[RMDB]
RNA sequence: GGGAACGACUCGAGUAGAGUCGAAAAUGGCCAUUCGUGGCCAAUGGUGUCCUAAGUCGAUCCGUUUGACGCUCGUGGGAGAACCCAUCGGAAACGAUGGAAGUUCGAAGAACACGAGCCGAGGAUCGAUAUGGAGAGGUGGCAGAUUCGUCUGCAAACAUCGUAAAUCUUUCGAGAUUUACGAUGUAAAAGAAACAACAACAACAAC
Reactivity to DMS in 0.01 (KOAc 150mM, MgCl2 10mM, bicine 150mM(pH8.5), 24C), signal-to-noise 3, nucleotides 027 to 156: u000g030g000c000c000a130u010u000c240g010u000g030g060c010c020a000a010u000g000g020u000g010u000c020c010u000a090a300g040u000c010g020a010u010c000c000g040u000u010u000g020a130c290g000c020u000c010g080u000g010g000g010a240g010a010a030c040c000c000a020u000c000g010g020a190a140a270c010g020a040u000g000g000a070a100g010u000u010c020g020a080a270g010a150a090c010a010c000g000a010g020c010c010g000a090g010g020a020u000c020g020a010u010a020u000g000g000a090g020a130g010g020u000g010g030c000a060g010a130u000u020c160g000u000c030u000g020c050a110a190
Reactivity to 2A3 in 0.01 (KOAc 150mM, MgCl2 10mM, bicine 150mM(pH8.5), 24C), signal-to-noise 3, nucleotides 027 to 156: u080g020g000c020c010a030u100u070c270g130u080g000g020c000c000a000a070u070g020g020u180g040u040c000c000u060a130a030g000u000c000g010a000u000c020c020g060u020u210u240g110a100c100g000c000u010c000g000u010g000g040g000a070g000a000a000c000c010c000a010u000c000g040g010a040a060a040c020g000a000u000g000g020a140a150g000u000u010c020g020a100a010g030a020a010c000a010c010g000a000g000c000c010g010a010g010g000a000u000c000g000a000u010a040u070g010g030a070g000a030g140g130u190g110g000c010a000g000a040u040u140c170g120u020c120u020g000c000a040a050